Source: RMDB library OK2TRN, as collected in RNAgym. An RNA of 177 nucleotides, treated with 2A3 and DMS and read out base by base. For DMS, 1,196 sequencing reads were counted. Reactivities are rounded to 0.1 and cut off at 0 and 3.
RNA sequence: GGGAACGACUCGAGUAGAGUCGAAAAUGUCAGGUAGCAAUUCUAUACAUUUGGCAAUCAGUGAAUUGAUAGGCGGUUUGCGAAUGGAUCCCUACUACCUGGUGACACCACAUUGAGGAAAUAACCACCUAUGGUGAGACUUCGGUCUCACCAUAGGAAAAGAAACAACAACAACAAC
Reactivity to 2A3 in 0.01 (KOAc 150mM, MgCl2 10mM, bicine 150mM(pH8.5), 24C), signal-to-noise 2, nucleotides 027 to 126: u130g020u000c000a000g000g000u020a010g010c050a050a110u120u000c010u110a090u010a190c020a110u020u040u120g280g000c040a030a010u020c020a030g060u010g180a200a160u260u050g050a090u160a130g030g200c030g030g050u000u020u100g000c010g030a010a000u020g000g020a050u040c000c020c000u000a020c000u000a000c000c020u010g010g000u000g020a020c040a040c020c010a040c000a100u120u190g100a080g000g090a090a100a010u100a090a080c000c010a050
Reactivity to DMS in 0.01 (KOAc 150mM, MgCl2 10mM, bicine 150mM(pH8.5), 24C), signal-to-noise 2, nucleotides 027 to 126: u000g020u000c000a020g010g030u000a030g020c080a040a100u030u000c200u000a050u000a050c020a020u000u010u000g030g020c000a000a030u000c000a070g050u010g030a100a140u010u000g020a170u010a170g010g010c030g020g010u000u000u000g020c020g000a020a030u000g000g000a090u000c020c130c000u020a040c010u000a020c010c010u000g010g000u000g000a070c160a190c020c020a070c200a120u000u000g030a180g030g000a050a080a120u000a070a100c060c130a200